[RMDB]
RNA sequence: GGGAACGACUCGAGUAGAGUCGAAAACGUCGUGAACUAGCGACAAUGCCGUAGAUCGAUCGUUAUCUAACCGAAACAUCGUGACUAGUCGUAGAAUAGAACCAGGAGUGGUCGCUGGCAAACAAAGACGGGUACUCAGAUUCGUCUGAGUACCCGUAAAAGAAACAACAACAACAAC
Reactivity to 2A3 in 0.01 (KOAc 150mM, MgCl2 10mM, bicine 150mM(pH8.5), 24C), signal-to-noise 1, nucleotides 027 to 126: c040g000u000c000g060u040g100a080a120c010u000a010g010c000g000a010c040a000a010u260g060c000c040g000u040a040g000a150u010c010g000a010u000c010g030u010u000a270u110c010u020a080a100c070c000g070a050a000a000c040a030u070c040g010u010g020a090c010u020a030g090u040c000g110u040a000g050a230a090u060a130g040a100a070c010c010a040g000g040a000g040u200g010g000u040c000g000c020u000g000g000c030a000a020a000c040a010a080a000g120
Reactivity to DMS in 0.01 (KOAc 150mM, MgCl2 10mM, bicine 150mM(pH8.5), 24C), signal-to-noise 1, nucleotides 027 to 126: c040g020u060c030g050u040g010a210a110c000u000a020g020c010g000a010c050a060a010u000g000c050c020g010u080a170g000a230u000c000g000a050u000c070g010u000u010a040u000c030u000a060a050c260c110g000a030a120a000c000a030u010c000g000u000g000a200c110u000a000g000u000c010g010u000a130g000a110a120u030a230g000a140a080c300c120a220g000g000a030g070u000g090g000u000c050g000c010u020g000g000c050a020a140a030c000a090a040a160g010
Source: RMDB library OK1LIB, as collected in RNAgym.
Structure probing data (2A3 and DMS) for a 177-nucleotide construct.
Reactivities are rounded to 0.1 and cut off at 0 and 3.
The DMS profile rests on 988 reads.
The RNA was probed in 150 mM KOAc, 10 mM MgCl2 and 150 mM bicine (pH 8.5) at 24 C.